[RMDB]
RNA sequence: GGGAACGACUCGAGUAGAGUCGAAAAUUAUCAUUCGUGAUAACGUUGCCGUAGGUGCGAUUGUCAGACUCCGACGGACGAAGAACUUCGAAAGAGGGGAGUCUCAACGAGUCUUGGAUUUAUCGCACCUAAACGGGCCUUUUGCAUUCGUGCAAAAACUAAUGAGGGAAUUCGUUCCCUCAUUAGUAAAAGAAACAACAACAACAAC
Reactivity to DMS in 0.01 (KOAc 150mM, MgCl2 10mM, bicine 150mM(pH8.5), 24C), signal-to-noise 2, nucleotides 027 to 156: u000u000a020u000c000a090u000u000c270g020u000g000a020u000a000a030c020g010u010u010g020c000c020g030u000a010g020g010u000g010c010g010a050u000u010g020u000c030a070g020a040c000u000c010c020g010a300c180g010g000a080c000g020a100a160g000a140a230c030u000u000c020g010a140a100a300g000a090g020g010g020g010a160g010u000c010u000c010a050a170c130g010a040g010u000c010u000u000g030g000a040u000u000u000a020u000c020g030c020a010c000c000u000a000a030a040c020g020g010g020c060c030u010u000u010u010g020c020a110u000u010c260g010u000g030c010a030a030a050a110
Reactivity to 2A3 in 0.01 (KOAc 150mM, MgCl2 10mM, bicine 150mM(pH8.5), 24C), signal-to-noise 3, nucleotides 027 to 156: u050u020a020u020c010a010u080u140c170g100u070g010a020u010a060a060c090g100u120u140g080c000c010g000u020a010g000g010u010g000c000g010a000u030u000g000u010c010a000g000a000c000u000c010c030g020a030c080g000g020a000c000g090a110a100g000a020a010c010u000u010c030g090a130a090a070g000a010g000g040g020g010a030g000u000c030u020c090a030a010c010g000a000g020u040c030u090u170g080g020a040u180u160u050a010u010c000g000c000a000c000c000u000a000a020a000c000g010g030g010c010c020u010u070u020u010g020c000a010u010u050c190g070u070g030c000a000a000a030a010